About this RNA:
An RNA of 177 nucleotides, treated with DMS and 2A3 and read out base by base. Source: RMDB library OK2TRN, as collected in RNAgym. Reactivities are given for positions 27 through 126.
RNA sequence: GGGAACGACUCGAGUAGAGUCGAAAAUUACCUGCCCGUUAUAUGCAAACCAUCGAAAAUGCUGCGGUCUGGGCGCAAAUUGGUGACAAGAUGGUGACCGUGGGGAAUAUUCGGGCCGGACAAAUCAACGCAUGAACCUAUUCGUAGGUUCAUGCGUAAAAGAAACAACAACAACAAC
Reactivity to DMS in 0.01 (KOAc 150mM, MgCl2 10mM, bicine 150mM(pH8.5), 24C), signal-to-noise 2, nucleotides 027 to 126: u010u000a120c020c000u000g000c000c010c000g010u000u010a040u000a070u010g000c230a090a100a110c040c060a050u000c030g000a120a120a030a110u000g010c100u000g030c040g080g000u010c070u020g010g040g020c070g000c060a030a080a200u000u000g000g000u000g010a170c080a080a230g000a070u010g000g010u000g020a080c170c030g030u000g000g000g000g020a210a060u000a040u000u010c020g000g030g000c000c110g030g010a160c180a020a110a040u000c180a160
Reactivity to 2A3 in 0.01 (KOAc 150mM, MgCl2 10mM, bicine 150mM(pH8.5), 24C), signal-to-noise 1, nucleotides 027 to 126: u140u060a160c000c000u010g020c020c000c000g000u040u030a050u050a000u030g060c040a150a080a040c050c000a040u120c030g100a070a060a000a040u120g060c050u050g080c000g030g000u000c050u090g120g090g080c050g000c000a020a030a040u090u120g100g000u120g130a010c010a070a140g060a060u030g000g100u030g010a000c010c040g100u130g010g090g050g060a030a040u030a040u080u100c030g000g020g040c030c020g030g000a010c020a050a040a040u110c030a020